[RMDB]
RNA sequence: GGGAACGACUCGAGUAGAGUCGAAAAGUCUCCUAGAGAGCUUGGCCGUCUGGCCUUACACCCCGACUUGCUGAGUUUCUCUAGGAGAGUCCCUUUCCCAGCCAGAGGUGGCUGGUCAAACAAUACCAAAACUCUUGCUAGUUCGCUAGCAAGAGAACUAAGAAUCUAUGUUCGCAUAGAUUCUUAGAAAAGAAACAACAACAACAAC
Reactivity to DMS in 0.01 (KOAc 150mM, MgCl2 10mM, bicine 150mM(pH8.5), 24C), signal-to-noise 2, nucleotides 027 to 156: g000u000c000u000c000c030u000a070g000a050g010a050g000c010u000u000g020g030c010c300g020u010c050u000g040g010c020c040u000u000a170c110a140c230c000c000c040g020a060c020u010u000g010c010u000g000a130g010u000u010u000c010u000c010u010a050g000g010a040g000a030g000u000c020c020c000u000u010u000c060c010c010a040g020c000c020a010g000a300g020g010u000g010g030c000u000g000g030u000c060a040a050a070c100a050a100u000a080c030c010a060a120a160a150c000u000c010u010u000g010c000u010a010g020u000u000c290g030c020u000a000g010c000a000a000g000a010g010a020a090
Reactivity to 2A3 in 0.01 (KOAc 150mM, MgCl2 10mM, bicine 150mM(pH8.5), 24C), signal-to-noise 4, nucleotides 027 to 156: g030u000c000u000c000c000u010a000g000a000g000a000g000c000u000u010g010g000c020c020g010u000c030u040g030g020c010c030u050u100a070c060a030c010c000c000c010g000a000c010u140u300g000c000u010g000a010g010u270u300u040c000u000c000u000a000g000g000a000g000a000g010u010c000c000c010u010u080u020c010c000c010a000g000c000c000a000g010a020g000g010u010g000g000c010u060g040g050u190c030a010a020a030c040a070a050u000a000c000c000a010a020a070a160c000u000c000u000u000g000c000u000a010g030u070u040c200g040c110u000a000g000c000a000a000g000a000g000a000a000
An RNA of 207 nucleotides, treated with DMS and 2A3 and read out base by base.
For DMS the reverse transcriptase was MarathonRT.
High 2A3 reactivity points to a flexible backbone, as in loops and unpaired stretches.
Conditions: 150 mM KOAc, 10 mM MgCl2 and 150 mM bicine (pH 8.5), 24 C.
Reactivities are given for positions 27 through 156.